[RMDB]
RNA sequence: GGGAACGACUCGAGUAGAGUCGAAAACAAGAGCGGUGGAUAGCAGCCCUAUCAAUAUCUAGGAGAACUGUGCUAUGUUUAGAAGAUUAGGUAGUCUCUAAACAGAACAAUUUACCUGCUGAACAAAAAAAUCCAAUGGCGUUCGCGCCAUUGGAAAGAAGCUAUACAGCUUCGGCUGUAUAGCUUCAAAAGAAACAACAACAACAAC
Reactivity to 2A3 in 0.01 (KOAc 150mM, MgCl2 10mM, bicine 150mM(pH8.5), 24C), signal-to-noise 1, nucleotides 027 to 156: c040a100a000g040a020g070c070g000g000u040g020g080a010u040a070g050c000a000g000c050c000c000u070a100u130c090a130a150u090a060u210c060u040a010g000g030a040g040a070a140c000u010g000u040g100c020u100a030u110g000u020u000u000a140g000a300a010g000a030u070u000a040g100g030u060a020g040u060c000u000c000u030a000a000a000c000a000g020a010a040c070a060a060u010u040u030a010c020c020u130g020c020u070g110a150a020c070a090a100a020a020a030a020a020u010c000c000a000a010u000g000g000c000g030u090u070c250g020c040g000c070c000a000u000u010g000g030a000a000a000